RNA sequence: GGGAACGACUCGAGUAGAGUCGAAAACCCAGUUCCGGGGCCGUUCACUGGAUCCGAAGCCUCUAGAAGGAUAAUAUAGGCACUCCAUACCCGACUCCGACUCAAUACGUCCCCGUCGUACAGAAUGCAAGGGCAUCCCUGUUCGCAGGGAUGCCAACAGUACUAAUUCGUUCGCGAAUUAGUACUGAAAAGAAACAACAACAACAAC
Reactivity to 2A3 in 0.01 (KOAc 150mM, MgCl2 10mM, bicine 150mM(pH8.5), 24C), signal-to-noise 2, nucleotides 027 to 156: c010c000c010a020g100u090u030c030c030g000g000g020g000c010c030g020u060u050c030a050c090u050g080g010a080u130c010c050g090a080a040g010c020c030u030c040u030a130g050a160a060g230g050a060u050a290a030u090a130u080a110g040g000c010a020c060u000c000c010a040u060a090c060c020c020g040a030c010u010c060c030g080a070c010u040c060a030a080u080a160c040g030u020c020c000c010c040g070u100c020g010u080a080c020a080g110a220a080u130g090c070a020a040g050g000g000c000a000u000c010c000c000u010g020u050u030c180g000c090a000g000g000g080a000u000g000c010c000a000a000
Reactivity to DMS in 0.01 (KOAc 150mM, MgCl2 10mM, bicine 150mM(pH8.5), 24C), signal-to-noise 1, nucleotides 027 to 156: c000c010c030a140g020u000u000c060c010g000g020g010g030c040c030g000u000u010c070a200c110u020g030g030a090u000c020c010g000a050a160g010c030c060u000c000u010a080g020a260a090g000g000a170u000a130a130u000a170u000a090g020g000c010a130c060u020c010c020a060u000a080c060c040c010g000a050c030u000c020c050g020a080c010u000c000a060a140u000a120c080g010u000c010c000c000c000g000u000c060g000u000a120c030a010g010a090a240u000g000c010a110a100g000g020g030c000a010u010c000c010c000u010g010u000u010c300g050c010a060g000g000g000a030u010g060c050c000a010a040
The data come from the RNA Mapping Database (RMDB), library M2RFPK.
Chemical mapping of a 207-nucleotide RNA with 2A3 and DMS.
For DMS, 1,786 sequencing reads were counted.
The reactions ran in a buffer of 150 mM KOAc, 10 mM MgCl2 and 150 mM bicine (pH 8.5), at 24 C.